[RMDB]
RNA sequence: GGGAACGACUCGAGUAGAGUCGAAAACUCCACGCUGGGUAAUGGACGACGGCGGCGUGUGGCGAACAGGGAUACCGGUAGUCAGUGUCUGGAACAUCCCAAGGAGCGGCGGAGCUAGCACCCCGACAAAACGGGCACAAGUUCGCUUGUGCCCGAACUUAUUUGGUAGGUUCGCCUACCAAAUAAGAAAAGAAACAACAACAACAAC
Reactivity to DMS in 0.01 (KOAc 150mM, MgCl2 10mM, bicine 150mM(pH8.5), 24C), signal-to-noise 2, nucleotides 027 to 156: c040u000c000c000a090c020g000c030u010g020g050g000u000a080a040u010g030g010a080c050g000a060c050g030g020c010g000g000c030g050u010g040u000g030g000c050g030a100a140c020a110g000g000g030a120u010a060c060c010g010g000u020a070g040u020c040a110g020u010g010u000c020u000g020g020a120a150c000a120u000c010c000c000a140a150g040g000a100g000c050g020g030c020g020g000a060g030c020u010a100g030c060a070c040c000c000c020g000a150c110a060a040a090a150c050g000g010g000c000a000c020a020a040g020u020u000c260g010c000u010u000g040u020g000c000c010c000g000a000a000
Reactivity to 2A3 in 0.01 (KOAc 150mM, MgCl2 10mM, bicine 150mM(pH8.5), 24C), signal-to-noise 3, nucleotides 027 to 156: c010u020c000c010a010c010g040c030u060g010g000g050u140a140a060u090g020g030a020c020g000a000c030g050g060c030g010g000c010g020u170g010u040g000g060c040g030a080a060c070a120g000g000g060a020u050a090c010c020g010g030u050a040g060u050c080a030g040u010g030u090c030u040g000g040a090a030c030a070u050c020c020c000a040a070g120g010a060g010c020g000g020c090g010g010a020g000c020u020a030g000c010a070c010c000c000c000g030a030c080a020a080a020a030c020g000g000g000c000a000c000a000a010g040u090u110c160g040c170u010u000g000u000g000c000c000c000g000a000a000
Conditions: 150 mM KOAc, 10 mM MgCl2 and 150 mM bicine (pH 8.5), 24 C. The record gives the reactivity of an RNA of 207 nucleotides to DMS and 2A3. The data come from the RNA Mapping Database (RMDB), library M2RFPK. The DMS profile rests on 2,937 reads. Values cover nucleotides 27 to 156.